Chemical mapping of a 177-nucleotide RNA with DMS and 2A3.
The data come from the RNA Mapping Database (RMDB), library OK2TST.

RNA sequence: GGGAACGACUCGAGUAGAGUCGAAAAGCAUGGCACGUGUCGUUGUGGGCUUUAGUGCGCAAGAGAUCUUGGCAAUUGUAGAGCAAGUGCAUCCUACUGGCUUGGCAAUAGAUACGAGUAGUGCGCCUCAAGCGCGAGGAUUCGUCCUCGCGCUUGAAAAAGAAACAACAACAACAAC
Reactivity to DMS in 0.01 (KOAc 150mM, MgCl2 10mM, bicine 150mM(pH8.5), 24C), signal-to-noise 1, nucleotides 027 to 126: g030c030a040u010g000g030c050a100c040g010u010g000u000c010g000u030u000g010u010g000g000g000c020u000u000u000a030g010u010g020c010g010c050a020a090g020a180g010a080u000c020u000u000g010g040c110a050a080u010u000g010u010a110g010a050g020c020a090a090g000u010g000c100a000u000c150c060u010a020c080u020g060g020c010u000u000g020g020c010a020a020u000a050g000a040u010a040c000g020a070g030u000a140g020u000g000c050g000c030c020
Reactivity to 2A3 in 0.01 (KOAc 150mM, MgCl2 10mM, bicine 150mM(pH8.5), 24C), signal-to-noise 1, nucleotides 027 to 126: g000c030a040u070g120g000c010a000c060g000u010g000u010c010g000u070u040g030u040g040g010g010c020u180u090u020a070g030u050g000c090g000c080a020a020g030a020g020a130u070c010u100u070g040g000c010a060a170u020u150g000u100a040g020a010g100c030a180a070g040u070g150c020a070u120c000c030u000a040c000u040g000g020c000u000u060g130g000c000a010a000u030a150g050a010u040a030c020g000a000g050u030a010g010u020g000c010g050c000c010